[RMDB]
RNA sequence: GGGAACGACUCGAGUAGAGUCGAAAAAUUGUAAGGUUUGUCGGUCGUUUUAAUCGUGUCUUACAACACGAUGAUGUUACCCCAUAAUGACCUGAGAGGUAUGAGGCGAUACCCGUAUUGAUUGUUGCGGAGAAUAAGUAUUCGUACUUAUUCUCCGAAAAGAAACAACAACAACAAC
Reactivity to DMS in 0.01 (KOAc 150mM, MgCl2 10mM, bicine 150mM(pH8.5), 24C), signal-to-noise 8, nucleotides 027 to 126: a080u010u010g010u010a050a050g010g000u000u000u000g010u000c080g020g010u000c020g020u000u000u000u000a110a030u000c000g020u000g010u010c030u000u020a100c260a110a030c000a010c000g010a010u000g000a070u010g010u000u010a090c030c000c010c030a090u020a060a060u010g010a030c020c020u010g010a090g010a080g010g010u000a040u010g000a100g010g010c040g000a100u010a060c010c010c020g010u010a120u000u000g010a150u000u000g010u000u000g010
Reactivity to 2A3 in 0.01 (KOAc 150mM, MgCl2 10mM, bicine 150mM(pH8.5), 24C), signal-to-noise 5, nucleotides 027 to 126: a000u100u110g040u050a080a030g040g020u050u100u100g100u070c030g010g010u010c010g020u010u020u020u100a050a030u020c000g000u000g040u010c080u120u250a060c030a040a000c010a010c010g010a010u010g010a020u090g060u080u100a100c000c030c000c000a020u100a110a050u110g040a020c000c010u070g110a100g000a020g030g040u040a060u110g020a030g050g030c030g010a000u020a050c010c020c010g020u090a120u060u180g190a270u030u040g040u030u040g040
The record gives the reactivity of an RNA of 177 nucleotides to DMS and 2A3. It was measured as part of the RMDB libraries RFM100 and RFMREP. Reactivities are given for positions 27 through 126. The reactions ran in a buffer of 150 mM KOAc, 10 mM MgCl2 and 150 mM bicine (pH 8.5), at 24 C.